The record gives the reactivity of an RNA of 207 nucleotides to 2A3. It was measured as part of the RMDB library RSTRND. The RNA was probed in 150 mM KOAc, 10 mM MgCl2 and 150 mM bicine (pH 8.5) at 24 C.

RNA sequence: GGGAACGACUCGAGUAGAGUCGAAAACCCUGCCCUUUGUAAGUACAAGGGGCUGACAGCAAUUCUAAGUUGGCGAAGAUAGCCAAUUAAUGCCUUCUAAGUGCGUGGAAGCUCGCUGAGUUACCCGCAGCCAAAUCCUUAAUUUGAAAGGAUGCAGGAGAUCAUUGAUCUUCGGAUCAAUGAUCUCAAAAGAAACAACAACAACAAC
Reactivity to 2A3 in 0.01 (KOAc 150mM, MgCl2 10mM, bicine 150mM(pH8.5), 24C), signal-to-noise 2, nucleotides 027 to 156: c000c000c000u010g000c000c000c000u000u010u110g150u130a300a300g010u080a060c010a000a000g000g020g000g000c000u010g080a010c010a040g000c000a010a120u120u100c110u260a140a070g060u030u000g000g040c070g030a160a000g100a190u120a060g000c000c010a000a030u050u050a040a010u070g030c040c000u170u020c030u210a170a150g110u070g050c010g000u190g060g000a030a040g000c000u010c100g300c190u280g000a000g000u020u040a070c000c000c080g000c020a060g080c030c020a060a100a060u040c000c000u090u060a200a220u140u140u220g160a160a000a000g010g030a000u050g060c010a010g060